[RMDB]
RNA sequence: GGGAACGACUCGAGUAGAGUCGAAAAGAUAUGGAACCGGUAGGGAGCGAUAGGGUCGGAAACGACCUCAUCGCUUUGAUCUACGGUUCCUAAGUCAAAGUAUGGUGCGGUUCGCCGCACCAUACAAUCAUACUAGCUUGUUCGCAAGCUAGUAUGAAAAAGAAACAACAACAACAAC
Reactivity to 2A3 in 0.01 (KOAc 150mM, MgCl2 10mM, bicine 150mM(pH8.5), 24C), signal-to-noise 3, nucleotides 027 to 126: g000a000u010a000u050g010g000a010a010c010c020g030g020u090a010g010g000g010a020g010c010g000a010u040a050g010g030g040u000c010g000g000a030a010a000c000g000a000c000c010u000c010a020u020c000g020c000u000u090u000g000a000u000c010u000a010c030g000g000u010u000c000c000u000a000a000g000u000c040a080a030a000g010u000a000u010g020g000u010g010c000g000g120u050u120c300g080c120c000g000c010a000c000c000a000u000a000c000a000a010
Reactivity to DMS in 0.01 (KOAc 150mM, MgCl2 10mM, bicine 150mM(pH8.5), 24C), signal-to-noise 5, nucleotides 027 to 126: g010a020u000a010u010g000g000a010a000c000c000g010g010u010a010g000g000g000a000g040c000g020a010u000a040g000g000g010u000c000g000g010a010a000a030c000g010a020c000c000u000c050a000u000c000g030c000u010u000u020g010a000u010c000u000a010c010g010g010u000u000c000c000u000a000a080g000u000c010a150a150a200g010u000a000u000g000g010u000g020c000g010g010u010u020c300g020c010c000g020c000a000c000c000a000u000a000c000a100a130